Chemical mapping of a 177-nucleotide RNA with DMS and 2A3. The reactions ran in a buffer of 150 mM KOAc, 10 mM MgCl2 and 150 mM bicine (pH 8.5), at 24 C. Values cover nucleotides 27 to 126.
RNA sequence: GGGAACGACUCGAGUAGAGUCGAAAAAAGGUUCCGUGUGAUCAGUAAUUGGACACGGGUGAGUCGAUCCUAAGAGAUAGGAUAAUUCCGUUUGAAAGCUGGGCUGUUUGAGGCGUGGGGUUCGUCCCUAGCGCACUCAUUUCGAUGAGUGCGCUAGAAAAGAAACAACAACAACAAC
Reactivity to DMS in 0.01 (KOAc 150mM, MgCl2 10mM, bicine 150mM(pH8.5), 24C), signal-to-noise 2, nucleotides 027 to 126: a050a060g010g030u020u000c000c010g000u000g020u000g010a050u020c040a040g000u010a160a100u060u000g030g010a010c030a010c030g000g020g040u020g030a030g010u000c000g000a120u010c000c000u000a040a110g030a100g030a130u000a080g000g000a040u000a110a100u000u010c000c020g040u000u010u000g000a050a110a080g000c070u020g000g010g010c050u000g020u010u010u020g000a050g020g000c060g030u000g000g000g010g000u040u000c040g000u020c020c010
Reactivity to 2A3 in 0.01 (KOAc 150mM, MgCl2 10mM, bicine 150mM(pH8.5), 24C), signal-to-noise 2, nucleotides 027 to 126: a000a000g080g110u090u060c000c000g000u000g000u020g060a100u040c010a000g180u140a240a000u220u140g000g010a000c000a000c050g000g000g000u020g000a030g030u030c000g000a000u000c000c010u000a000a000g160a000g010a120u080a210g050g050a090u190a090a200u130u010c000c040g000u050u030u110g160a120a030a000g020c030u040g000g000g000c000u000g060u080u020u160g040a070g050g000c050g000u040g000g000g010g000u000u030c030g020u000c000c000